[RMDB]
RNA sequence: GGGAACGACUCGAGUAGAGUCGAAAAGCUCUCUCCAGGGCUUUGGAGACAUCCUGGAAGGGGAAAGAGGAAGGUGGAAAAAGAAGGGGCGGGCCUCCCGAUCCGAGGGUCCCAACCACCGAGUUUGCAUUCUUAUAGUCUUCGGACUAUAAGAAUGAAAAGAAACAACAACAACAAC
Reactivity to 2A3 in 0.01 (KOAc 150mM, MgCl2 10mM, bicine 150mM(pH8.5), 24C), signal-to-noise 2, nucleotides 027 to 126: g010c000u000c000u000c010u000c050c020a000g000g000g070c000u160u160u130g050g000a090g020a010c020a060u040c000c020u020g000g030a020a060g030g020g000g010a090a130a060g100a030g070g050a070a070g040g000u020g020g060a160a090a040a040a000g070a070a060g010g000g010g020c040g030g060g050c000c000u010c000c000c040g030a040u010c050c000g020a040g050g060g050u030c000c000c000a020a040c000c000a030c020c030g030a050g020u070u180u180g020
Reactivity to DMS in 0.01 (KOAc 150mM, MgCl2 10mM, bicine 150mM(pH8.5), 24C), signal-to-noise 4, nucleotides 027 to 126: g010c020u000c010u000c120u010c090c070a060g010g010g020c170u000u010u000g000g020a210g010a150c080a060u000c030c020u000g000g000a030a040g010g000g000g000a040a060a060g000a120g000g020a060a070g010g020u000g010g000a050a060a070a100a120g010a110a120g000g020g000g000c070g010g010g020c040c030u010c000c010c020g010a100u010c120c120g000a070g010g010g000u010c020c010c020a080a180c030c010a030c030c020g000a100g010u000u000u010g000

Chemical mapping of a 177-nucleotide RNA with 2A3 and DMS. DMS (dimethyl sulfate) methylates the pairing face of unpaired adenines and cytosines. The DMS profile rests on 3,853 reads. The reactions ran in a buffer of 150 mM KOAc, 10 mM MgCl2 and 150 mM bicine (pH 8.5), at 24 C. 2A3 adducts were read by reverse transcription with SuperScript II with manganese.